[RMDB]
RNA sequence: GGGAACGACUCGAGUAGAGUCGAAAAUCCAUUUCUCUACCGUUCAUGCAGCGGUUGAUCGAUUGGGUUGCUGGUUGAUUGAUCGAUCGAUGGUCAGGAGUUGGAAGAGAAUUGGAGAGAGUGCAUUAUUGCCCAACCGAUUCGUCGGUUGGGCAAUAAAAGAAACAACAACAACAAC
Reactivity to 2A3 in 0.01 (KOAc 150mM, MgCl2 10mM, bicine 150mM(pH8.5), 24C), signal-to-noise 1, nucleotides 027 to 126: u000c000c010a000u000u020u000c000u000c000u010a050c000c000g000u010u010c000a030u080g000c010a020g020c000g050g000u000u000g000a000u000c000g000a020u000u030g020g140g000u290u140g060c020u070g010g260u060u200g030a010u000u000g000a010u000c000g000a000u000c040g030a120u180g120g000u270c060a050g030g010a020g040u210u300g080g010a020a000g010a000g020a000a000u000u050g000g000a030g000a000g000a000g010u040g050c000a060u030u030